An RNA of 177 nucleotides, treated with 2A3 and DMS and read out base by base. It was measured as part of the RMDB library OK1LIB. Conditions: 150 mM KOAc, 10 mM MgCl2 and 150 mM bicine (pH 8.5), 24 C. The 2A3 profile rests on 972 reads. 2A3 adducts were read by reverse transcription with SuperScript II with manganese.
RNA sequence: GGGAACGACUCGAGUAGAGUCGAAAAGAAAGUAGCGAAGCAUGAGUGCAUCAGGCUCAUGCCACCUGAUGCUAAAGGAUUCCACCAUGUACGGAAUCCCAGUACGUGGAAAAGCUACGAAAAGAAAGGGAUUAGGUUUGUUCGCAAACCUAAUCCCAAAAGAAACAACAACAACAAC
Reactivity to 2A3 in 0.01 (KOAc 150mM, MgCl2 10mM, bicine 150mM(pH8.5), 24C), signal-to-noise 1, nucleotides 027 to 126: g180a000a050a000g000u000a000g000c000g050a300a030g230c110a000u050g030a040g060u100g140c040a000u070c000a060g000g030c030u040c130a120u000g000c000c000a000c000c000u030g000a020u060g000c000u000a010a000a010g160g000a010u010u000c000c000a000c000c080a180u300g030u030a010c030g120g000a150a050u050c000c000c070a010g030u070a000c050g000u000g000g030a010a010a020a020g000c000u000a000c040g000a000a000a080a170g190a040a080a040
Reactivity to DMS in 0.01 (KOAc 150mM, MgCl2 10mM, bicine 150mM(pH8.5), 24C), signal-to-noise 1, nucleotides 027 to 126: g000a000a070a300g030u000a000g000c010g060a250a040g100c000a060u000g000a180g040u000g010c080a040u000c000a150g070g060c010u040c000a040u070g000c010c040a040c000c000u000g000a070u000g000c000u000a060a120a000g030g080a060u030u000c010c000a170c060c070a060u040g070u060a060c220g100g000a000a220u000c000c000c000a110g000u010a000c000g000u000g000g070a080a150a100a300g000c000u000a000c030g000a000a140a100a190g040a100a080a030